[RMDB]
RNA sequence: GGGAACGACUCGAGUAGAGUCGAAAAGACAAUUAAUCAGGAUAGGCUAGAGUAUCUAUCAACCAACUGUCAACUCAAAAGCCAUUGCACUAAUUGCCAUCCCAAGGGACUAGAGUGCAGGAAUACCGCCGGUCCUCCUAUUCGUAGGAGGACCGGCAAAAGAAACAACAACAACAAC
Reactivity to 2A3 in 0.01 (KOAc 150mM, MgCl2 10mM, bicine 150mM(pH8.5), 24C), signal-to-noise 1, nucleotides 027 to 126: g000a000c000a000a180u260u090a020a040u300c050a090g150g000a000u160a100g000g000c000u000a000g000a000g020u150a130u010c000u160a000u040c000a000a000c070c000a000a240c000u190g000u130c030a000a260c000u060c030a000a160a000a020g000c000c000a000u000u250g000c000a000c010u000a050a050u030u040g000c000c000a060u120c000c010c000a050a260g270g000g000a000c090u100a000g000a000g160u000g000c040a000g000g010a160a160u000a200c040c060